[RMDB]
Description: Chemical mapping of a 177-nucleotide RNA with DMS and 2A3. Reactivities are given for positions 27 through 126. The 2A3 profile rests on 398 reads. For DMS the reverse transcriptase was MarathonRT. For DMS, 739 sequencing reads were counted. For 2A3 the reverse transcriptase was SuperScript II with manganese.
RNA sequence: GGGAACGACUCGAGUAGAGUCGAAAAGAAGGUCGAGUGCACGACCAGAGAGUGCGGUGAGAGACCGACAAAGAGUUCGAAUCGGAACGAACCACCGCAAACGAUCGACUGAAGAUCGAAGUGAGAAACCAUGAGGCCGAUUCGUCGGCCUCAUGGUAAAAGAAACAACAACAACAAC
Reactivity to DMS in 0.01 (KOAc 150mM, MgCl2 10mM, bicine 150mM(pH8.5), 24C), signal-to-noise 1, nucleotides 027 to 126: g000a280a070g090g000u060c000g000a300g000u030g080c180a150c000g000a040c000c000a090g000a230g120a090g000u050g000c000g000g000u080g050a090g000a300g000a140c000c000g000a120c060a060a120a000g000a200g000u080u090c180g000a010a200u000c000g000g000a050a000c140g000a140a050c200c000a020c000c050g000c000a020a050a110c000g000a060u000c060g000a050c280u000g080a060a170g080a050u000c000g000a020a000g000u000g040a170g000a170a000
Reactivity to 2A3 in 0.01 (KOAc 150mM, MgCl2 10mM, bicine 150mM(pH8.5), 24C), signal-to-noise 1, nucleotides 027 to 126: g090a080a030g130g000u100c160g000a050g110u300g010c300a020c110g000a000c000c000a000g000a000g000a000g000u140g000c000g000g000u000g000a240g000a000g110a000c070c000g000a000c100a000a240a000g260a030g000u150u230c080g050a000a000u000c000g000g000a060a040c020g000a000a000c000c000a000c000c000g180c260a070a080a080c000g000a070u080c000g090a030c230u060g110a130a030g000a000u000c000g000a190a000g000u030g070a190g030a160a000